This 177-nucleotide RNA was probed chemically with DMS. The RNA was probed in 150 mM KOAc, 10 mM MgCl2 and 150 mM bicine (pH 8.5) at 24 C. It was measured as part of the RMDB library TTRINS.
RNA sequence: GGGAACGACUCGAGUAGAGUCGAAAAGAUAUGGACGAUCAUCUUCGGGAGUCUCAAGGUUGCUAUGUAUCGGAAACGAUACAAACGCAACCCUGAGACAUCGAUCGAAGAUGAUCGUCCUAAGUCACGAAGUGUUGAAGUUCGCUUCAACACUUCGAAAAGAAACAACAACAACAAC
Reactivity to DMS in 0.01 (KOAc 150mM, MgCl2 10mM, bicine 150mM(pH8.5), 24C), signal-to-noise 2, nucleotides 027 to 126: g000a020u000a300u010g010g010a020c010g010a020u000c000a000u000c000u000u010c010g000g000g000a090g010u000c000u040c000a000a050g010g020u000u000g000c010u040a300u000g010u000a000u020c000g000g010a160a110a290c000g010a030u000a010c000a000a030a150c290g000c000a020a000c010c000c060u000g000a020g000a000c000a080u010c150g010a090u020c000g000a000a000g010a000u000g000a000u000c000g000u020c000c000u000a020a030g000u010c030a300